[RMDB]
RNA sequence: GGGAACGACUCGAGUAGAGUCGAAAACGGAUGCAAAAUAAGCGAGAAAAGGUAACAGCCGCAAAUGGUCACAAAAUAGUACAAUGGAGAGCAGAAGAUCGGAAAAACCACCAUAAAAAUAAAGCAAUACCUUACUUAACUUCGGUUAAGUAAGGUAAAAAGAAACAACAACAACAAC
Reactivity to DMS in 0.01 (KOAc 150mM, MgCl2 10mM, bicine 150mM(pH8.5), 24C), signal-to-noise 3, nucleotides 027 to 126: c080g010g000a090u000g030c060a040a040a140a090u000a070a100g020c060g000a070g010a040a020a120a070g010g000u000a060a080c070a040g020c070c030g000c090a020a030a060u010g010g010u000c030a050c090a060a060a060a070u010a050g010u010a030c110a080a050u010g000g000a050g030a030g000c070a020g020a070a030g000a080u000c060g010g010a070a030a050a030a070c060c030a050c060c050a070u010a020a040a070a050a080u030a020a070a110g000c140a070a160
Reactivity to 2A3 in 0.01 (KOAc 150mM, MgCl2 10mM, bicine 150mM(pH8.5), 24C), signal-to-noise 1, nucleotides 027 to 126: c060g060g000a000u050g010c020a000a090a000a300u110a150a030g050c000g030a050g080a100a130a020a000g000g000u010a020a020c010a110g000c000c000g020c050a020a030a160u110g000g000u050c000a010c010a170a110a030a020u080a050g060u020a010c020a050a020u060g070g010a000g020a000g030c020a000g030a060a000g030a050u100c030g030g000a030a130a000a000a090c000c030a010c000c000a020u200a080a090a010a020a020u210a010a130a000g050c000a020a070
Chemical mapping of a 177-nucleotide RNA with DMS and 2A3.
Source: RMDB library M2PK90, as collected in RNAgym.
DMS adducts were read by reverse transcription with MarathonRT.
The DMS profile rests on 1,729 reads.
For 2A3, 1,014 sequencing reads were counted.
Reactivities are given for positions 27 through 126.
The RNA was probed in 150 mM KOAc, 10 mM MgCl2 and 150 mM bicine (pH 8.5) at 24 C.